[RMDB]
RNA sequence: GGGAACGACUCGAGUAGAGUCGAAAACGGGAGGAAGCUGUGGAGGCUGGUUUGCUGGGGCCACCCAGUGCGGGCUCAGGAAGGGAAGGAAUGUGACCGAGGCCGGGUGUGGCUCAGCAGAGUGCAGUAUGUCAAGAAUCUUCGGAUUCUUGACAUAAAAAGAAACAACAACAACAAC
Reactivity to DMS in 0.01 (KOAc 150mM, MgCl2 10mM, bicine 150mM(pH8.5), 24C), signal-to-noise 4, nucleotides 027 to 126: c110g000g000g020a080g000g000a050a070g000c110u000g010u010g000g010a080g000g020c040u010g000g020u000u010u000g000c020u000g010g000g020g000c020c040a040c010c010c010a060g020u030g020c020g000g020g010c010u000c030a050g020g010a170a170g000g000g020a090a090g000g010a150a080u010g010u000g010a150c000c000g010a090g010g010c020c040g000g000g000u000g020u030g000g020c010u010c010a020g000c000a030g010a050g000u010g010c100a100g000
Reactivity to 2A3 in 0.01 (KOAc 150mM, MgCl2 10mM, bicine 150mM(pH8.5), 24C), signal-to-noise 6, nucleotides 027 to 126: c020g010g020g010a080g040g010a080a030g030c050u030g040u040g070g020a060g030g020c070u030g060g030u030u050u040g000c010u000g010g010g050g090c000c010a020c000c000c000a010g030u040g060c010g010g040g000c020u010c030a040g020g090a090a070g080g030g060a040a050g070g090a120a120u140g040u080g060a030c010c000g000a060g040g090c020c000g030g010g010u080g020u080g040g010c010u000c010a000g000c010a000g030a020g020u110g000c020a010g080